RNA sequence: GGGAACGACUCGAGUAGAGUCGAAAAUAAAUGAGCGUACAGCACUCUCAGACUGUACGCUAUCUGAGUGUGUCAACUUCAAAGUCCAACGACACACACAAGGCGUUGGAACAAGAGUGUGAGAAAAUACAUCUUGGACAUUCGUGUCCAAGAUGUAAAAAGAAACAACAACAACAAC
Reactivity to DMS in 0.01 (KOAc 150mM, MgCl2 10mM, bicine 150mM(pH8.5), 24C), signal-to-noise 3, nucleotides 027 to 126: u000a030a090a070u010g000a020g010c000g010u000a030c010a060g000c020a070c150u000c060u000c040a070g020a140c010u000g020u000a000c020g000c000u000a010u000c060u010g020a100g030u000g010u000g020u000c070a110a080c100u000u000c130a030a110a200g000u000c040c060a030a060c040g010a070c040a050c070a070c130a070c230a040a080g000g000c040g000u000u000g000g030a050a030c080a030a150g010a010g000u030g040u000g000a030g000a080a050a040a110
Reactivity to 2A3 in 0.01 (KOAc 150mM, MgCl2 10mM, bicine 150mM(pH8.5), 24C), signal-to-noise 2, nucleotides 027 to 126: u190a000a110a110u170g090a010g000c010g010u020a020c010a010g020c020a080c050u030c000u000c020a020g030a180c020u000g000u030a000c000g030c000u000a020u000c030u050g030a040g020u020g020u050g070u100c050a050a060c050u130u030c100a140a120a040g060u020c020c000a010a030c050g020a040c000a010c010a010c020a000c030a060a070g030g000c010g010u010u010g050g000a060a030c020a150a020g050a040g030u050g020u020g010a020g080a050a060a000a000

Chemical mapping of a 177-nucleotide RNA with DMS and 2A3. Values cover nucleotides 27 to 126. The DMS profile rests on 2,491 reads. The RNA was probed in 150 mM KOAc, 10 mM MgCl2 and 150 mM bicine (pH 8.5) at 24 C.